[RMDB]
RNA sequence: GGGAACGACUCGAGUAGAGUCGAAAACGAUGCAACUGCUCUAAUCAUUUUCGUACCAGUGUAUUCCUUCAAACCUCUUCUCUUGACUGUAGUGGUGGCCUGAAGGAGUUCAUUGGUACACAAAUCUACUGCCUAACAUCUUCGGAUGUUAGGCAGUAAAAGAAACAACAACAACAAC
Reactivity to 2A3 in 0.01 (KOAc 150mM, MgCl2 10mM, bicine 150mM(pH8.5), 24C), signal-to-noise 2, nucleotides 027 to 126: c020g020a040u080g000c050a190a200c080u080g000c010u000c020u110a050a180u090c060a170u020u080u120u150c040g010u000a010c000c000a000g040u010g000u020a000u030u000c000c000u000u010c000a020a060a080c010c000u000c000u090u000c010u030c010u060u130g250a300c300u040g160u180a000g020u020g000g020u000g010g030c030c010u020g000a000a000g000g000a000g000u030u010c000a000u020u000g020g000u010a000c000a010c000a000a050a010u030c040u040